RNA sequence: GGGAACGACUCGAGUAGAGUCGAAAAUGCUACACCCACUACACGUAAUUACCGGUGUAGCUAAGGUAGUUACGACAACUGAUCCGAGAGGAUCUACAUUAAGGCGAAGGUGAAAUAUAGGUUAAUAGGCACCUGAAGCCGAGCCUAUUAACCAACACACCUAUCCACUAUUCGUAGUGGAUAGGUGAAAAGAAACAACAACAACAAC
Reactivity to 2A3 in 0.01 (KOAc 150mM, MgCl2 10mM, bicine 150mM(pH8.5), 24C), signal-to-noise 3, nucleotides 027 to 156: u140g010c000u030a020c020a060c040c020c020a020c040u130a040c140a020c040g070u110a090a050u130u060a040c060c000g090g000u120g030u080a050g030c040u020a080a010g040g000u030a020g010u040u060a030c030g050a060c080a120a080c120u050g010a000u010c000c000g010a010g000a030g080g000a000u000c010u000a020c010a060u120u170a070a020g030g000c050g070a020a000g000g020u100g060a040a090a020u250a070u130a060g000g010u000u000a000a000u010a000g000g000c020a040c060c050u080g110a040a010g010c000c000g010a010g010c000c000u000a000u010u010a010a000c010c000a080a000c040a000
Reactivity to DMS in 0.01 (KOAc 150mM, MgCl2 10mM, bicine 150mM(pH8.5), 24C), signal-to-noise 1, nucleotides 027 to 156: u000g000c000u030a020c030a200c000c000c020a120c060u010a030c070a080c030g000u000a010a070u010u000a090c030c030g020g010u010g010u000a040g070c120u000a080a170g010g010u000a050g000u000u000a130c030g020a280c190a070a050c140u000g020a010u000c000c030g030a300g000a300g020g000a020u010c000u000a030c100a090u000u000a050a070g000g030c060g010a070a140g040g000u000g000a010a070a030u010a170u000a160g000g030u000u000a030a040u000a010g010g030c000a100c080c070u000g010a140a240g070c060c030g000a090g030c000c000u000a000u000u020a030a060c010c010a050a110c080a180
Structure probing data (2A3 and DMS) for a 207-nucleotide construct. The 2A3 profile rests on 2,145 reads. The reactions ran in a buffer of 150 mM KOAc, 10 mM MgCl2 and 150 mM bicine (pH 8.5), at 24 C. Values cover nucleotides 27 to 156. Source: RMDB library OK3TST, as collected in RNAgym. 2A3 adducts were read by reverse transcription with SuperScript II with manganese.